[RMDB]
RNA sequence: GGGAACGACUCGAGUAGAGUCGAAAAAUUCUAUACAAACUUGAAAUGUCUUUUGACUUUAUAUUUGAAAAUGUGUGUGCAUGUGCAUUCAUGAAGUGGAGAGAAAUGAUAAAUGCUUUCAUUUGAGAUAGUCUGGUAGAUUCGUCUACCAGACUAUAAAAGAAACAACAACAACAAC
Reactivity to DMS in 0.01 (KOAc 150mM, MgCl2 10mM, bicine 150mM(pH8.5), 24C), signal-to-noise 4, nucleotides 027 to 126: a140u030u000c010u000a080u060a170c090a090a080a080c080u010u010g010a030a060a040u010g010u020c020u000u000u010u010g000a180c060u000u000u000a050u010a090u030u010u020g000a060a080a060a030u020g010u020g010u010g040u000g010c050a070u010g000u020g000c020a030u010u000c040a040u010g000a050a100g020u000g000g000a040g030a120g000a040a030a030u010g010a080u030a030a040a080u000g000c100u000u010u000c010a040u010u010u000g040a130g000
Reactivity to 2A3 in 0.01 (KOAc 150mM, MgCl2 10mM, bicine 150mM(pH8.5), 24C), signal-to-noise 5, nucleotides 027 to 126: a000u060u010c020u020a140u050a150c030a050a100a020c040u060u140g100a050a080a100u120g080u050c020u060u130u090u160g050a040c000u020u090u040a190u050a110u100u070u150g100a100a070a040a050u040g020u000g000u000g010u030g070c040a070u090g090u120g100c020a010u020u060c000a000u030g070a070a000g050u080g030g040a030g000a000g010a040a050a050u080g020a000u100a070a110a040u050g030c020u020u020u050c040a090u040u060u090g100a120g010